[RMDB]
Structure probing data (DMS) for a 177-nucleotide construct. Source: RMDB library OK2TRN, as collected in RNAgym. DMS adducts were read by reverse transcription with MarathonRT.

RNA sequence: GGGAACGACUCGAGUAGAGUCGAAAAAGGCGCCUGCUGCCACGCCCGGCUAAUUUUUUGUAUUUUUAGUGGAGACGGAGUUUCACCAUGUUAGCCAGGAUGGUCUCGAUCUCCUGACCUCAUGAUCCCAAUGAGUGCAAUUCGUUGCACUCAUUGGAAAAGAAACAACAACAACAAC
Reactivity to DMS in 0.01 (KOAc 150mM, MgCl2 10mM, bicine 150mM(pH8.5), 24C), signal-to-noise 1, nucleotides 027 to 126: a060g000g000c090g010c050c060u010g040c110u000g020c030c030a050c050g000c040c010c040g000g020c030u010a030a000u000u000u000u000u010u000g010u000a020u000u000u000u000u000a080g010u010g000g010a060g010a090c130g020g000a090g000u010u010u000c050a110c050c040a030u000g010u000u000a030g010c040c090a060g010g010a030u010g020g000u000c050u000c130g010a040u000c030u010c010c020u010g010a110c030c020u010c060a060u010g000a120u020c070